[RMDB]
RNA sequence: GGGAACGACUCGAGUAGAGUCGAAAACUCGAUUAUUUCCAAGGAAUAUACGGACAAGCUGGCCGCCGAUGGCAAGAAGGACGAUCUGAAUCAGUACCCGGUCGGUACGGGUCCGUUCCAGUUCGUAGGAUAUUUACUCAUUCGUGAGUAAAUAUCCAAAAGAAACAACAACAACAAC
Reactivity to DMS in 0.01 (KOAc 150mM, MgCl2 10mM, bicine 150mM(pH8.5), 24C), signal-to-noise 6, nucleotides 027 to 126: c020u000c030g010a090u010u010a090u000u000u010c020c040a130a140g020g010a100a070u010a160u010a100c040g010g010a040c040a080a120g010c070u010g000g000c030c010g010c040c040g000a100u010g010g010c070a070a080g020a140a110g000g010a100c090g010a070u000c070u000g000a100a080u010c060a080g010u000a080c050c040c050g010g010u000c070g020g010u000a050c100g000g020g010u000c010c030g010u000u000c030c050a090g010u000u000c040g020u000a160
Reactivity to 2A3 in 0.01 (KOAc 150mM, MgCl2 10mM, bicine 150mM(pH8.5), 24C), signal-to-noise 5, nucleotides 027 to 126: c010u020c020g050a090u070u070a060u110u190u000c040c020a100a070g090g010a100a060u110a030u030a240c010g000g010a010c020a060a050g030c040u040g030g000c010c000g010c000c030g060a060u040g040g020c040a050a040g060a030a030g080g030a030c050g030a070u020c050u190g080a150a080u060c030a040g010u030a040c000c000c020g000g010u090c030g020g000u040a040c020g090g000g000u000c000c010g000u010u000c000c000a010g040u020u020c020g030u050a070